[RMDB]
RNA sequence: GGGAACGACUCGAGUAGAGUCGAAAAGCACUUGCACUCCAAUUCUCAGAUGUCAACAGGCAUAAACUUAAAAUACUAGAAAGUCAAAGACAAGAAGCUGCAGUAGAGGCCUCAAAAGCAGUGAUAGUAAAGACAACACUCUUUUCUGCAACUGAUGUGACUAUCGCUGAUUCGUCAGCGAUAGUCAAAAAGAAACAACAACAACAAC
Reactivity to 2A3 in 0.01 (KOAc 150mM, MgCl2 10mM, bicine 150mM(pH8.5), 24C), signal-to-noise 1, nucleotides 027 to 156: g000c000a010c050u040u060g000c000a020c080u040c000c030a040a150u080u000c000u000c040a080g030a060u050g070u020c030a010a000c030a260g070g000c000a020u120a050a040a200c020u040u040a070a110a070a070u170a130c050u050a050g100a300a080a070g080u050c060a290a020a000g030a010c030a040a020g030a040a040g030c020u030g000c000a000g000u060a070g010a010g020g020c000c000u060c080a110a080a030a030g000c000a000g010u000g000a030u060a000g000u030a080a000a000g030a020c020a130a050c050a070c020u010c040u040u060u080u040c010u050g050c000a000a090c020u040g080a110u080g120

The record gives the reactivity of an RNA of 207 nucleotides to 2A3. Values cover nucleotides 27 to 156. 2A3 is a SHAPE reagent: it acylates the 2'-hydroxyl of flexible nucleotides of all four kinds. The reactions ran in a buffer of 150 mM KOAc, 10 mM MgCl2 and 150 mM bicine (pH 8.5), at 24 C.